An RNA of 177 nucleotides, treated with 2A3 and DMS and read out base by base. The reactions ran in a buffer of 150 mM KOAc, 10 mM MgCl2 and 150 mM bicine (pH 8.5), at 24 C. 2A3 adducts were read by reverse transcription with SuperScript II with manganese. For DMS, 1,325 sequencing reads were counted. It was measured as part of the RMDB library OK1LIB.

RNA sequence: GGGAACGACUCGAGUAGAGUCGAAAAGCUCGGAGACGAGCAAGGCUGACAAAACACUGUCCCAACCUCCACGUGGUGUCGGCUGGAUAAUGCUGCAUUAUGUUGCAUUUAUCAACUGGGAAGCAAAGGACCACUAAUACUUCGGUAUUAGUGGUCCAAAAGAAACAACAACAACAAC
Reactivity to 2A3 in 0.01 (KOAc 150mM, MgCl2 10mM, bicine 150mM(pH8.5), 24C), signal-to-noise 4, nucleotides 027 to 126: g000c000u010c000g000g010a090g010a020c000g000a000g030c000a000a030g070g020c010u020g010a000c070a020a170a060a020c070a040c030u070g090u030c000c000c010a040a070c000c030u060c030c020a120c100g040u070g020g010u000g010u000c000g020g020c010u040g020g000a010u000a060a020u010g000c000u020g000c020a030u140u070a100u300g010u030u010g000c010a010u020u050u140a030u050c030a000a040c050u010g000g020g000a030a020g070c060a050a050a090
Reactivity to DMS in 0.01 (KOAc 150mM, MgCl2 10mM, bicine 150mM(pH8.5), 24C), signal-to-noise 1, nucleotides 027 to 126: g000c000u000c030g000g000a300g000a270c000g000a000g000c010a060a130g000g000c040u010g030a000c050a110a060a160a050c020a070c150u000g000u030c000c000c000a030a130c010c000u000c000c060a060c190g090u000g000g000u010g000u000c000g040g000c000u000g130g000a000u000a000a000u000g000c000u000g120c010a190u000u050a000u030g000u000u000g000c020a000u000u030u000a030u000c020a030a140c030u010g000g000g030a110a110g000c090a060a100a060